[RMDB]
RNA sequence: GGGAACGACUCGAGUAGAGUCGAAAAUCGAUGGCGUUCGCGCCAUCGAAGAGCCGUACCGCGUAGCACGCGGAUAGGAGUGAAGAUAUCCAAGGGCAUGGAGGAGGCGUGCUUUCGAGCACGCCAAGUACACCCUUCUGUUCGCAGAAGGGUGUACAAAAGAAACAACAACAACAAC
Reactivity to 2A3 in 0.01 (KOAc 150mM, MgCl2 10mM, bicine 150mM(pH8.5), 24C), signal-to-noise 3, nucleotides 027 to 126: u020c000g000a010u000g000g010c000g050u070u040c280g000c000g040c070c010a000u000c000g000a000a000g010a010g020c020c020g060u100a090c020c000g000c020g020u030a040g110c150a010c070g000c010g000g010a020u070a020g050g010a030g050u120g090a080a070g040a130u090a050u090c020c020a030a040g050g030g000c060a030u020g030g020a050g050g050a070g000g000c010g000u010g000c000u070u030u050c170g020a010g010c000a000c020g000c000c000a000a000
Reactivity to DMS in 0.01 (KOAc 150mM, MgCl2 10mM, bicine 150mM(pH8.5), 24C), signal-to-noise 3, nucleotides 027 to 126: u010c010g010a020u010g000g000c010g020u000u020c200g030c000g030c010c010a000u000c010g020a010a050g000a120g010c010c010g020u010a170c010c010g000c010g020u000a070g010c100a300c020g000c080g000g000a140u000a040g000g020a130g000u010g000a090a090g000a090u000a100u000c030c020a010a070g010g020g000c010a130u000g000g000a090g010g010a170g010g000c000g000u010g010c000u000u000u010c100g000a030g020c000a000c000g000c020c000a000a030
Structure probing data (2A3 and DMS) for a 177-nucleotide construct. 2A3 adducts were read by reverse transcription with SuperScript II with manganese. Reactivities are given for positions 27 through 126.